[RMDB]
RNA sequence: GGGAACGACUCGAGUAGAGUCGAAAACAAAAGGAUGUCGAGACGCUGCGCUAUCUGGCCAGGAAUUGCCAUGGUGAUAACCGCCCCGAUUGCCCGAUCAUCCACCAGCUUGCCGAGCCGGGGCCGAUAGUCAUACGCAUUUCGAUGCGUAUGACUAAAAAGAAACAACAACAACAAC
Reactivity to 2A3 in 0.01 (KOAc 150mM, MgCl2 10mM, bicine 150mM(pH8.5), 24C), signal-to-noise 1, nucleotides 027 to 126: c010a000a120a000a040g050g000a090u100g010u130c010g020a010g000a100c030g000c090u050g000c030g000c080u020a010u110c050u070g000g000c030c020a060g040g100a090a080u090u080g050c000c030a080u130g000g010u020g010a070u050a120a110c010c010g000c020c020c010c000g080a130u010u140g090c000c020c040g030a030u030c020a020u050c020c010a030c030c000a020g040c000u020u130g060c020c020g040a000g000c000c000g010g000g000g030c010c000g000a030
Reactivity to DMS in 0.01 (KOAc 150mM, MgCl2 10mM, bicine 150mM(pH8.5), 24C), signal-to-noise 2, nucleotides 027 to 126: c100a090a080a110a150g000g010a040u010g010u000c070g010a110g000a110c080g020c040u020g030c140g010c010u000a040u010c110u010g000g010c050c050a110g020g020a140a070u000u000g020c030c000a070u000g000g040u010g010a100u020a080a080c100c040g000c040c020c000c020g000a100u000u000g000c030c050c020g000a050u010c060a010u010c030c020a080c130c050a100g000c030u000u010g020c110c030g010a060g010c020c020g020g000g020g040c040c110g010a150